[RMDB]
Structure probing data (2A3 and DMS) for a 207-nucleotide construct.

RNA sequence: GGGAACGACUCGAGUAGAGUCGAAAAGUUACAUUCGUGUAACAGAUCACCUUUGUGUAGAGUGGAGUCAUGACCCUUAUAGAUGAGCCCAUUGGGCUCAUCGAAUAAGCAUGACGUUGAAACUCUACACUCUGGUUAGUGCCUUCUUCGGAAGGAAUUAUUAACCUAACUUCGGUUAGGUUAAUAAAAAAGAAACAACAACAACAAC
Reactivity to 2A3 in 0.01 (KOAc 150mM, MgCl2 10mM, bicine 150mM(pH8.5), 24C), signal-to-noise 4, nucleotides 027 to 156: g010u010u000a010c010a000u080u200c250g110u100g000u030a000a000c000a030g100a100u170c050a010c010c000u010u020u000g010u000g000u010a000g000a010g010u010g010g010a010g000u000c000a000u060g060a260c120c020c010u010u010a020u010a020g000a010u010g010a000g010c030c070c250a300u170u300g010g000g010c000u000c000a000u000c000g000a010a010u010a000a000g010c000a000u000g000a010c020g000u050u050g000a000a000a000c000u000c000u000a000c000a010c000u000c000u000g000g010u040u090a090g060u100g170c030c000u010u000c010u020u060c250g120g000a010a000g020g000a000a000
Reactivity to DMS in 0.01 (KOAc 150mM, MgCl2 10mM, bicine 150mM(pH8.5), 24C), signal-to-noise 4, nucleotides 027 to 156: g020u000u000a000c020a070u000u000c240g040u010g020u000a010a020c020a180g010a180u000c060a050c010c000u000u000u000g020u000g030u000a000g000a040g040u000g000g000a280g010u010c010a010u000g000a180c150c150c020u000u000a050u000a210g000a020u000g010a020g020c000c010c010a300u000u010g070g030g030c000u000c000a000u000c000g000a080a050u000a010a030g010c000a010u000g000a030c010g000u010u000g000a220a170a050c010u000c010u000a020c000a010c010u010c010u010g010g010u000u000a090g020u000g010c000c000u000u000c000u000u000c300g010g020a030a010g010g000a080a090